[RMDB]
Structure probing data (2A3 and DMS) for a 207-nucleotide construct. Reactivities are given for positions 27 through 156. The RNA was probed in 150 mM KOAc, 10 mM MgCl2 and 150 mM bicine (pH 8.5) at 24 C.
RNA sequence: GGGAACGACUCGAGUAGAGUCGAAAAUCACCACUGCUGGCUCCUUCGGGUACCACAGCCAAGCUCCUCGCCGAGGCCGUCUACAAGACUCAACGUUAGAUGGCGCGCGACGUUUCUAAUAGAGUCGAGUCCCGCUCGUCACGGGUACCGUCGUAGUUACAGUAUUUAUGUUCGCAUAAAUACUGUAAAAAGAAACAACAACAACAAC
Reactivity to 2A3 in 0.01 (KOAc 150mM, MgCl2 10mM, bicine 150mM(pH8.5), 24C), signal-to-noise 6, nucleotides 027 to 156: u100c020a040c060c010a040c060u070g070c030u020g000g030c030u030c030c000u080u120c150g060g000g010u060a040c020c030a030c060a030g030c010c010a080a020g020c020u050c030c010u050c010g040c030c040g040a060g130g000c000c000g000u000c010u010a020c020a170a110g060a170c070u090c180a120a030c100g050u090u030a010g000a020u010g020g000c020g000c010g000c010g060a050c040g010u010u080u010c050u050a120a160u070a130g070a010g040u030c000g010a040g040u000c010c010c000g000c020u040c030g080u030c020a010c050g020g010g030u060a060c020c020g030u030c020g040u060a080g050u020
Reactivity to DMS in 0.01 (KOAc 150mM, MgCl2 10mM, bicine 150mM(pH8.5), 24C), signal-to-noise 2, nucleotides 027 to 156: u010c070a120c030c080a110c020u000g010c090u000g060g020c000u000c010c020u000u000c200g070g030g000u020a030c000c020a050c060a030g010c020c030a070a130g020c030u010c020c030u000c030g000c010c000g000a090g030g000c000c000g000u000c010u000a060c070a110a140g020a170c080u000c150a110a130c120g020u000u010a030g010a050u000g000g020c020g010c060g020c090g000a070c020g000u010u010u000c070u010a070a150u000a120g010a040g000u000c000g000a230g010u010c010c010c030g020c030u020c200g000u010c120a000c040g010g030g010u010a050c020c030g050u000c030g010u000a070g010u000
Reactivities are rounded to 0.1 and cut off at 0 and 3.